[RMDB]
RNA sequence: GGGAACGACUCGAGUAGAGUCGAAAAGGCGGCGGCAGCAGCCGGGCAGUGGCGGAGAGCGCGCCGUCGAGCCCGACGACCGGCAAGGGUGGUGACACGGCCCACGGAGGGAAGAAGAAAGACAGCGCCAGCUGGAGCCGUUCGCGGUUCCAGCUGGAAAAGAAACAACAACAACAAC
Reactivity to DMS in 0.01 (KOAc 150mM, MgCl2 10mM, bicine 150mM(pH8.5), 24C), signal-to-noise 3, nucleotides 027 to 126: g010g000c010g000g020c030g000g000c070a120g000c050a190g030c020c010g000g010g030c070a070g030u030g000g000c020g000g000a080g010a100g010c060g010c070g010c010c000g010u000c000g010a100g020c030c010c000g020a120c100g000a080c060c040g020g000c060a110a080g000g000g010u010g000g000u010g000a090c080a130c060g000g020c030c020c050a100c070g020g000a100g030g000g010a060a060g010a120a090g000a050a080a100g010a080c100a060g000c150g010
Reactivity to 2A3 in 0.01 (KOAc 150mM, MgCl2 10mM, bicine 150mM(pH8.5), 24C), signal-to-noise 5, nucleotides 027 to 126: g030g010c030g000g000c030g030g030c060a060g000c000a020g020c090c010g010g000g000c100a080g050u110g120g000c030g000g050a080g000a020g070c080g000c040g000c040c000g030u010c010g000a020g010c020c000c000g030a070c050g030a040c040c030g030g000c050a070a090g060g000g020u040g010g040u050g010a020c030a020c090g040g000c000c030c000a030c040g050g030a050g030g050g000a020a060g040a020a010g050a070a130a020g070a020c030a020g010c050g000
The data come from the RNA Mapping Database (RMDB), library OK1LIB.
Chemical mapping of a 177-nucleotide RNA with DMS and 2A3.
As a SHAPE reagent, 2A3 marks flexible, mostly unpaired nucleotides at the ribose 2'-OH.
Values cover nucleotides 27 to 126.
The reactions ran in a buffer of 150 mM KOAc, 10 mM MgCl2 and 150 mM bicine (pH 8.5), at 24 C.
For 2A3 the reverse transcriptase was SuperScript II with manganese.